[RMDB]
RNA sequence: GGGAACGACUCGAGUAGAGUCGAAAAGGCCAGGAGUUCAAGACCACCCUGGGCAACAUAGUGAGACCUCCGUCUCUACAAAAAUAUUUUAAAAAUUAGCUGGAUGUGGUGGUAUAUAACUGUAGUCUCAGCUACAUGGGAAGCUGAGCUGGGAGAAAGUACCUUCCAAUUUCGAUUGGAAGGUACUAAAAGAAACAACAACAACAAC
Reactivity to 2A3 in 0.01 (KOAc 150mM, MgCl2 10mM, bicine 150mM(pH8.5), 24C), signal-to-noise 1, nucleotides 027 to 156: g010g000c020c010a000g000g090a120g000u060u080c100a100a070g050a030c000c000a000c000c010c000u010g010g030g000c000a020a060c000a040u240a000g110u030g020a000g000a000c000c070u110c090c060g040u010c000u000c000u060a020c030a070a180a050a000a000u230a060u120u070u280u300a060a140a070a120a060u070u010a010g000c010u020g070g000a080u090g010u010g060g000u000g000g000u040a080u000a010u000a120a050c090u070g050u010a080g050u060c010u000c020a020g050c000u090a100c040a050u130g100g000g000a020a040g040c020u040g000a000g000c000u020g010g050g010a020g050a000a260